[RMDB]
RNA sequence: GGGAACGACUCGAGUAGAGUCGAAAAAGGACACAUAUGAAUGAAUGCACACAAUGCUCACUGUACUUGUGAGGAAACUGAGGUCCUGAGAGGUUUACCCCAGAUCAUGCAGCUAGUAAGUGGCAGAUGAUAACGCGAAGUUCGCUUCGCGUUAUCAAAAAGAAACAACAACAACAAC
Reactivity to 2A3 in 0.01 (KOAc 150mM, MgCl2 10mM, bicine 150mM(pH8.5), 24C), signal-to-noise 1, nucleotides 027 to 126: a000g050g000a040c030a000c010a060u170a060u260g060a090a020u110g050a070a020u110g060c010a020c000a000c000a180a090u160g030c020u010c040a010c030u040g030u150a060c050u070u170g000u000g030a020g000g050a020a080a010c010u030g040a070g040g000u000c000c000u000g000a040g000a000g070g000u020u090u180a110c000c020c000c010a000g010a090u030c050a040u080g050c030a010g000c020u040a030g010u030a130a010g030u070g000g020c000a010g050a090
Reactivity to DMS in 0.01 (KOAc 150mM, MgCl2 10mM, bicine 150mM(pH8.5), 24C), signal-to-noise 3, nucleotides 027 to 126: a080g010g010a040c060a100c110a040u000a110u020g000a110a060u010g010a070a080u000g020c060a100c070a070c110a130a080u000g000c010u000c040a070c050u000g030u010a040c160u010u000g010u000g000a060g000g000a050a060a040c070u010g000a160g020g010u000c040c010u010g000a100g000a160g010g010u010u000u000a140c080c010c000c050a060g010a040u000c070a070u000g000c030a040g010c060u000a060g010u010a050a100g020u020g000g000c030a060g010a160
Chemical mapping of a 177-nucleotide RNA with 2A3 and DMS.
It was measured as part of the RMDB library OK2TST.
DMS adducts were read by reverse transcription with MarathonRT.
The RNA was probed in 150 mM KOAc, 10 mM MgCl2 and 150 mM bicine (pH 8.5) at 24 C.